Conditions: 150 mM KOAc, 10 mM MgCl2 and 150 mM bicine (pH 8.5), 24 C. Chemical mapping of a 207-nucleotide RNA with 2A3. High 2A3 reactivity points to a flexible backbone, as in loops and unpaired stretches. The data come from the RNA Mapping Database (RMDB), library OK3TST.
RNA sequence: GGGAACGACUCGAGUAGAGUCGAAAACUUGCUCGCACAUAGUCAUAGAGUUCAUGCGAGGGGGCGAGAAGACCCGGGCCCAGAUUGGUACGGUUGGGUUUUUCAGCUCUGUAAACGAUCUGGCGAAAGAUGGCAUGGGAAUUGGAAGAGAUGGUAGGUCUAGUGAUCGAUUCGUCGAUCACUAGACAAAAGAAACAACAACAACAAC
Reactivity to 2A3 in 0.01 (KOAc 150mM, MgCl2 10mM, bicine 150mM(pH8.5), 24C), signal-to-noise 2, nucleotides 027 to 156: c010u010u140g030c000u010c020g080c060a060c070a140u140a080g020u130c000a060u100a110g070a040g050u080u130c030a050u080g000c000g020a080g010g000g000g010g000c030g010a070g020a070a000g050a090c000c000c000g010g020g000c000c040c000a010g020a100u010u110g000g030u090a020c040g000g090u110u050g040g010g000u080u060u000u060u180c040a030g000c000u010c030u090g010u070a100a120a060c000g000a020u000c000u030g000g020c080g050a020a040a060g040a010u190g010g000c020a020u020g080g000g000a050a100u080u050g040g000a020a010g000a020g020a030u040g050g030u060a010g000